[RMDB]
Source information: Structure probing data (2A3 and DMS) for a 177-nucleotide construct. DMS adducts were read by reverse transcription with MarathonRT. It was measured as part of the RMDB library TTRDEL. The DMS profile rests on 1,268 reads.
RNA sequence: GGGAACGACUCGAGUAGAGUCGAAAAGAUAUGGAAGACGCCGUGAGCUAUGAAGCAUACUAAGUCGGAAACGAUAUGUAUGUGGAGCUCGGGGUCUUCCUAAGUCAAACGUGUCUUCGGACACGAACGAUUAUUCAGCGUUCGCGCUGAAUAAUCGAAAAGAAACAACAACAACAAC
Reactivity to 2A3 in 0.01 (KOAc 150mM, MgCl2 10mM, bicine 150mM(pH8.5), 24C), signal-to-noise 3, nucleotides 027 to 126: g000a010u050a020u050g010g010a020a020g020a020c050g230c300c060g300u300g050a030g020c030u050a130u300g010a000a000g020c000a000u000a000c030u150a270a210g080u000c030g010g000a020a020a010c010g000a010u040a030u280g000u000a000u000g010u020g000g020a010g000c020u010c000g000g010g010g000u000c000u010u000c000c000u000a010a000g000u010c020a060a050a080c020g000u000g000u010c000u040u050c300g130g000a020c010a000c000g000a080a030
Reactivity to DMS in 0.01 (KOAc 150mM, MgCl2 10mM, bicine 150mM(pH8.5), 24C), signal-to-noise 1, nucleotides 027 to 126: g000a030u000a150u000g000g000a030a000g000a020c000g000c000c000g050u020g040a040g030c010u000a300u020g000a160a100g000c010a000u000a020c000u020a080a130g020u000c000g000g000a030a010a130c000g000a010u000a260u000g010u000a010u000g000u000g000g010a020g020c020u000c080g000g000g000g000u000c000u000u000c000c000u000a010a100g000u000c040a020a170a140c030g010u000g010u000c010u000u010c160g000g010a020c000a020c000g000a050a100

About this RNA: Reactivities are given for positions 27 through 126.